RNA sequence: GGGAACGACUCGAGUAGAGUCGAAAAGUUUUAGCAGAUGAGGAUGAAAAUGCAAGGGCAUUUCUAAGCUCUAAUUCACAGGCAAAAUAUGUGAAAGACUGUGCACAAAUGGUAAGACACUAUUUACGUGCUGAGAUGGCACAAAUGUCUAUGUCAGAGUACUCUAGACAUUCGUGUCUAGAGUACUAAAAGAAACAACAACAACAAC
Reactivity to DMS in 0.01 (KOAc 150mM, MgCl2 10mM, bicine 150mM(pH8.5), 24C), signal-to-noise 3, nucleotides 027 to 156: g010u000u000u010u010a090g040c020a070g000a060u000g020a100g020g000a100u000g000a050a030a080a100u010g010c030a140a080g010g020g010c030a100u000u000u010c060u010a110a200g030c010u000c040u010a060a180u010u000c020a030c030a040g020g000c070a080a060a090a160u010a040u020g000u020g010a060a080a120g000a070c020u000g040u000g010c040a080c050a040a070a040u000g010g010u000a070a080g010a120c030a040c040u000a100u000u010u000a080c210g040u000g000c010u000g020a160g030a180u000g010g010c000a040c010a060a020a020u000g010u000c010u000a090u000g010u000c030a120g000
Reactivity to 2A3 in 0.01 (KOAc 150mM, MgCl2 10mM, bicine 150mM(pH8.5), 24C), signal-to-noise 5, nucleotides 027 to 156: g010u060u060u030u090a030g000c050a020g010a110u100g010a050g040g030a050u070g070a040a030a050a040u090g020c050a060a060g070g050g010c040a030u050u120u040c070u090a070a020g010c010u000c010u030a050a070u040u030c010a010c010a030g010g010c040a040a060a130a040u160a070u100g050u020g030a010a010a010g050a020c060u050g020u040g070c050a020c010a050a030a000u030g010g020u050a040a000g010a010c010a010c030u040a070u080u120u120a090c110g000u010g000c000u010g010a080g040a200u210g050g000c000a000c000a000a070a020u040g000u000c020u060a050u110g020u030c030a010g020